An RNA of 207 nucleotides, treated with DMS and 2A3 and read out base by base.
[RMDB]
RNA sequence: GGGAACGACUCGAGUAGAGUCGAAAAGAUGUUCUUUGGUGUGGGUACAUCGGGUGUCACAACAAUUACUAUGACGCAUCAUGGUGGUUGUGAACUCGUGGCUUGAUGCGUCAAGUUAUGAGUGUUCUAUGGUACUGUACCCACAGUGAUAUAGAAACACGUAAAAUAAUUUCGAUUAUUUUACGUGAAAAGAAACAACAACAACAAC
Reactivity to DMS in 0.01 (KOAc 150mM, MgCl2 10mM, bicine 150mM(pH8.5), 24C), signal-to-noise 6, nucleotides 027 to 156: g010a110u010g010u000u000c020u000u000u000g020g030u000g050u010g010g010g010u000a010c030a110u010c110g020g020g010u000g020u000c010a050c040a060a070c030a040a040u000u000a050c030u000a070u000g020a090c180g030c200a110u000c010a040u000g030g020u000g020g020u000u000g000u020g010a060a050c030u010c030g050u000g010g010c020u000u000g010a030u000g050c240g030u000c010a020a020g010u000u000a020u010g010a080g020u000g010u000u000c090u000a080u000g030g020u000a040c040u000g020u000a030c010c020c010a090c010a020g010u000g010a110u000a090u010a100g000a160a100a270
Reactivity to 2A3 in 0.01 (KOAc 150mM, MgCl2 10mM, bicine 150mM(pH8.5), 24C), signal-to-noise 9, nucleotides 027 to 156: g080a070u140g020u080u030c040u070u100u130g160g030u030g020u010g010g000g000u000a000c010a040u080c110g050g060g030u120g050u070c020a020c010a070a040c020a050a160u080u050a020c020u020a050u120g020a020c070g030c110a090u030c010a010u070g020g030u030g020g020u070u020g040u040g080a040a020c020u010c050g020u030g040g000c010u010u010g000a000u020g020c060g060u010c000a000a000g000u010u020a020u030g020a020g020u040g050u140u080c070u100a120u110g050g010u070a060c040u040g010u000a000c000c000c000a000c000a000g000u010g020a040u060a020u030a200g110a020a050a010
DMS adducts were read by reverse transcription with MarathonRT. It was measured as part of the RMDB library OK3TST.